Conditions: 150 mM KOAc, 10 mM MgCl2 and 150 mM bicine (pH 8.5), 24 C. Structure probing data (DMS and 2A3) for a 207-nucleotide construct. In probing experiments dimethyl sulfate is read out at A N1 and C N3, which are open when not base-paired. 2A3 adducts were read by reverse transcription with SuperScript II with manganese. DMS adducts were read by reverse transcription with MarathonRT.
RNA sequence: GGGAACGACUCGAGUAGAGUCGAAAAUGUAACUUCGGUUACAAUUCAACCUUUGUGGUCACCGAGAACCGACCCAAACAAUGUUGCACCCAUUGGGUGCAAUGAUUUGCGGUUCGUUUGACGUGACCACUCUGGUAGUGCGUUGGUUCGCCAACAAAAAGUAAGAAGAGUUCGCUCUUCUUACUUUAAAAGAAACAACAACAACAAC
Reactivity to DMS in 0.01 (KOAc 150mM, MgCl2 10mM, bicine 150mM(pH8.5), 24C), signal-to-noise 4, nucleotides 027 to 156: u000g030u000a000a020c010u000u000c300g060g010u000u000a000c010a070a130u000u000c060a170a040c000c010u000u040u000g010u000g020g020u000c000a040c010c010g000a300g020a000a010c020c010g040a030c010c000c000a010a040a050c040a120a120u000g010u010u000g010c000a000c010c010c020a300u010u020g040g070g010u000g000c000a010a000u000g010a100u000u000u000g020c080g070g020u000u010c260g020u000u000u010g010a300c130g000u000g000a020c000c000a000c000u000c010u020g010g020u000a060g000u010g010c080g030u000u000g020g010u010u000c110g000c030c010a040a050c060a080a060
Reactivity to 2A3 in 0.01 (KOAc 150mM, MgCl2 10mM, bicine 150mM(pH8.5), 24C), signal-to-noise 4, nucleotides 027 to 156: u070g000u000a010a000c010u040u070c280g090g000u000u010a000c020a050a060u180u140c050a030a020c000c000u000u000u030g010u000g010g000u010c000a010c000c010g010a000g000a030a030c050c090g010a000c010c010c000a020a000a000c030a020a020u040g010u000u000g000c000a000c050c040c100a300u190u300g020g000g010u000g000c000a000a000u030g030a040u020u000u010g070c180g000g020u040u060c010g010u000u020u020g010a010c000g000u020g000a000c000c000a000c000u000c000u000g030g020u010a060g100u080g120c120g000u000u020g020g030u030u060c220g080c100c030a010a040c050a030a190